[RMDB]
RNA sequence: GGGAACGACUCGAGUAGAGUCGAAAACUGCACAGCAGCUACGACAUGAUAUCGAAGCAGUCCGUGGAGAACGUCGUCUUGGAGGCGGACGCGGUCGGGAUGCUGCGGCCGGCACCCGCGAAGGAGGGCACGUGGAGACGUUCGCGUUUCCACGUGCAAAAGAAACAACAACAACAAC
Reactivity to DMS in 0.01 (KOAc 150mM, MgCl2 10mM, bicine 150mM(pH8.5), 24C), signal-to-noise 4, nucleotides 027 to 126: c030u000g020c040a090c120a080g000c020a020g000c000u020a170c060g010a020c050a110u030g000a110u030a110u050c070g010a170a100g020c030a060g020u030c070c030g010u000g000g010a150g010a050a160c060g000u000c040g000u020c010u000u020g010g010a260g020g030c030g000g000a030c010g000c050g000g020u000c010g000g000g010a080u010g000c030u000g010c050g000g020c020c040g030g000c040a110c050c000c030g000c100g000a090a070g020g020a110g020g010
Reactivity to 2A3 in 0.01 (KOAc 150mM, MgCl2 10mM, bicine 150mM(pH8.5), 24C), signal-to-noise 6, nucleotides 027 to 126: c000u020g020c010a010c010a060g010c000a000g010c010u080a040c030g070a000c010a060u150g070a080u130a070u200c060g040a090a020g010c030a020g070u030c020c030g020u070g060g030a130g010a080a060c050g070u020c000g040u000c100u060u160g070g050a040g060g000c020g010g000a010c020g010c010g010g010u020c000g000g030g050a070u090g020c010u010g010c000g030g000c000c000g010g000c020a040c010c010c000g030c030g020a050a040g060g060a030g020g080
The data come from the RNA Mapping Database (RMDB), library OK1LIB. An RNA of 177 nucleotides, treated with DMS and 2A3 and read out base by base. Conditions: 150 mM KOAc, 10 mM MgCl2 and 150 mM bicine (pH 8.5), 24 C. DMS adducts were read by reverse transcription with MarathonRT. For 2A3 the reverse transcriptase was SuperScript II with manganese.